[RMDB]
This 207-nucleotide RNA was probed chemically with 2A3. The data come from the RNA Mapping Database (RMDB), library OK3TST. The reactions ran in a buffer of 150 mM KOAc, 10 mM MgCl2 and 150 mM bicine (pH 8.5), at 24 C.
RNA sequence: GGGAACGACUCGAGUAGAGUCGAAAAUGGGACGUCACGGCUCCGGCUUACCCUUGGGACGCUUACGGCGCGGCCCUGGCGGAGCUGGCGGCGGAGUACCGGGACCGGGGCGUGGUGUUCCUGAACGUCGACGCGCCUAUGCGUCUGCUGGGCGUGCGAACGUAGAAGGCUUCGGCCUUCUACGUUCAAAAGAAACAACAACAACAAC
Reactivity to 2A3 in 0.01 (KOAc 150mM, MgCl2 10mM, bicine 150mM(pH8.5), 24C), signal-to-noise 1, nucleotides 027 to 156: u120g010g010g020a000c020g000u040c000a000c040g300g000c130u020c010c000g000g000c020u090u260a290c000c000c000u090u170g010g000g070a070c150g040c070u020u130a150c040g050g060c000g180c000g030g010c000c010c010u090g110g020c100g010g010a130g020c000u010g260g020c000g070g020c010g000g000a020g010u040a040c010c030g000g000g030a030c000c000g010g000g010g000c000g000u000g040g000u000g000u010u000c000c000u000g000a030a010c020g060u130c090g050a160c000g000c010g020c060c000u050a050u240g060c050g210u200c200u240g010c020u000g000g020g000c020g020u000g040c010